[RMDB]
RNA sequence: GGGAACGACUCGAGUAGAGUCGAAAAGUUUAUGCAAAGGCACUUCGCAAUUUGUGCUCAAACAUUGCUUAUUCAAACACGCUUCACAAUGUGCGACAAAGAAACAUUGUUAUAAGAGCUAAUGUUUACCACGCCUAAAGGUUCGCCUUUAGGCGAAUCUUUCGCACUUCUUCGGAAGUGCGAAAGAAAAAGAAACAACAACAACAAC
Reactivity to 2A3 in 0.01 (KOAc 150mM, MgCl2 10mM, bicine 150mM(pH8.5), 24C), signal-to-noise 1, nucleotides 027 to 156: g070u180u180u060a000u020g030c040a050a040a160g070g000c120a110c040u180u200c110g090c270a240a300u150u220u080g000u000g000c020u110c080a020a070a000c000a000u040u040g000c020u090u010a090u150u120c060a120a000a000c080a010c110g010c000u050u070c080a000c000a000a000u000g000u000g010c000g010a050c130a180a180a000g140a040a060a000c000a010u000u000g010u030u040a230u070a130a190g000a030g000c020u080a120a000u040g090u030u000u070a070c000c010a030c070g000c040c000u000a010a010a010g090g050u080u160c240g080c030c000u000u000u000a000g000g010c000g010a000a000